[RMDB]
RNA sequence: GGGAACGACUCGAGUAGAGUCGAAAAGAUAUGGAAUGGGCCAUAGGACGAAGAACUCUCUCGGAAACGAGAGAGGGAGUCCGUGGAACUACCCAUUCCUAAGUCAAAGUGCAGCUUCGGCUGCACAUCAAGAAUUCAAGUUCGCUUGAAUUCUUGAAAAAGAAACAACAACAACAAC
Reactivity to 2A3 in 0.01 (KOAc 150mM, MgCl2 10mM, bicine 150mM(pH8.5), 24C), signal-to-noise 4, nucleotides 027 to 126: g010a020u100a060u190g000g010a000a000u010g000g010g050c000c030a030u110a300g100g000a010c030g120a300a160g010a070a030c000u010c000u000c000u010c000g000g020a080a050a050c020g000a000g000a000g000a000g030g000g000a000g000u000c000c000g000u000g000g030a030a040c040u150a040c030c000c000a000u010u000c000c000u010a080a020g040u010c050a150a090a030g000u000g000c000a000g000c020u090u190c300g170g000c010u000g010c010a000c010a000
Reactivity to DMS in 0.01 (KOAc 150mM, MgCl2 10mM, bicine 150mM(pH8.5), 24C), signal-to-noise 5, nucleotides 027 to 126: g000a050u010a300u010g000g000a030a000u000g000g030g020c010c010a020u010a090g070g010a010c000g010a150a190g000a130a230c000u000c000u000c000u000c000g000g000a090a110a240c010g000a010g010a000g000a020g000g010g010a090g020u000c000c010g000u000g010g000a050a030c050u020a300c040c000c000a000u000u010c000c000u000a020a090g000u000c070a090a090a160g010u010g010c000a000g000c000u000u020c220g010g020c010u010g010c000a000c000a040

Chemical mapping of a 177-nucleotide RNA with 2A3 and DMS. DMS adducts were read by reverse transcription with MarathonRT. In probing experiments dimethyl sulfate is read out at A N1 and C N3, which are open when not base-paired. For DMS, 7,281 sequencing reads were counted. The data come from the RNA Mapping Database (RMDB), library TTRDES.